[RMDB]
This 207-nucleotide RNA was probed chemically with 2A3 and DMS. For DMS, 1,476 sequencing reads were counted. The RNA was probed in 150 mM KOAc, 10 mM MgCl2 and 150 mM bicine (pH 8.5) at 24 C. In probing experiments dimethyl sulfate is read out at A N1 and C N3, which are open when not base-paired. The 2A3 profile rests on 688 reads.
RNA sequence: GGGAACGACUCGAGUAGAGUCGAAAACCACUAGCGCACACUCAGACCUUUGAAGUGCUGGAUGUUCUCAUAACUGGACCUCUGACCAUGCAAGGCACCAGUGGCUACUGUGGAUCAUUUUCUCAUUUUGAUAUCAGUGAUUUAUAAGGGUGAUGAAAUACCUCAGGACUUUCGAGUCCUGAGGUAUAAAAGAAACAACAACAACAAC
Reactivity to 2A3 in 0.01 (KOAc 150mM, MgCl2 10mM, bicine 150mM(pH8.5), 24C), signal-to-noise 2, nucleotides 027 to 156: c010c000a010c080u060a030g030c130g020c070a050c010a020c080u080c070a000g110a170c060c050u160u210u170g110a090a010g000u030g080c000u010g030g030a020u090g000u110u040c070u020c060a130u070a200a020c030u050g000g010a040c000c040u040c010u020g030a120c050c000a020u190g050c050a080a020g040g020c030a120c040c030a040g010u030g000g000c040u110a080c050u080g000u010g020g020a010u000c000a000u040u020u180u040c030u020c040a090u060u040u120u300g110a110u100a020u080c030a040g000u000g090a080u040u100u110a120u040a090a030g010g060g000u030g000a080u000g020a170a000
Reactivity to DMS in 0.01 (KOAc 150mM, MgCl2 10mM, bicine 150mM(pH8.5), 24C), signal-to-noise 1, nucleotides 027 to 156: c070c020a130c030u000a060g000c030g010c060a130c040a010c080u010c070a160g000a120c030c040u000u000u030g030a130a070g010u010g000c050u000g040g020a110u010g000u010u010c040u010c010a110u000a100a110c070u000g020g010a300c030c000u010c040u000g010a060c070c070a140u010g000c070a080a100g000g060c020a070c040c010a080g060u000g000g010c010u000a050c050u000g000u000g010g010a060u000c020a130u000u000u000u000c040u000c040a160u000u000u000u040g020a090u000a040u000c020a120g000u010g000a050u000u000u000a060u000a100a020g030g030g060u000g040a190u010g010a010a070
It was measured as part of the RMDB library OK3TST.